Conditions: 150 mM KOAc, 10 mM MgCl2 and 150 mM bicine (pH 8.5), 24 C. Structure probing data (2A3 and DMS) for a 177-nucleotide construct. In probing experiments dimethyl sulfate is read out at A N1 and C N3, which are open when not base-paired. For DMS, 2,642 sequencing reads were counted. The data come from the RNA Mapping Database (RMDB), library OK1LIB.
[RMDB]
RNA sequence: GGGAACGACUCGAGUAGAGUCGAAAAGUUCGCUUCAGAGGGUGGCCCAAUGCCAGGAGCGAGAAGAACUGGUGGACGAAGUCUCUGACGACUACGUGUGGUUGAGCAAACUGCUAGAUUUGGCUCCCCAUGGGACCAGGUUCGCCUGGUCCCAUGGAAAAGAAACAACAACAACAAC
Reactivity to 2A3 in 0.01 (KOAc 150mM, MgCl2 10mM, bicine 150mM(pH8.5), 24C), signal-to-noise 3, nucleotides 027 to 126: g040u050u040c010g070c120u040u030c040a040g040a060g180g120g070u140g050g040c000c000c030a020a080u130g010c020c020a030g030g010a070g070c070g030a090g060a100a010g010a030a020c020u030g020g020u070g000g030a020c080g060a070a070g180u010c030u010c060u080g080a060c020g000a010c030u040a010c070g100u130g060u110g120g050u070u080g010a010g050c030a040a010a120c030u060g020c060u030a040g070a260u090u030u070g020g000c000u030c010c000
Reactivity to DMS in 0.01 (KOAc 150mM, MgCl2 10mM, bicine 150mM(pH8.5), 24C), signal-to-noise 2, nucleotides 027 to 126: g000u000u010c050g000c090u020u010c100a100g000a130g040g010g000u020g020g000c020c010c100a100a050u050g000c000c000a060g020g000a020g000c040g000a160g030a090a070g000a160a030c090u000g000g020u000g010g000a200c170g010a120a050g000u010c010u030c060u000g050a030c050g020a080c050u000a010c090g000u050g020u000g000g010u010u010g000a080g000c130a050a070a090c010u000g000c010u030a140g000a190u030u000u020g000g000c060u030c040c030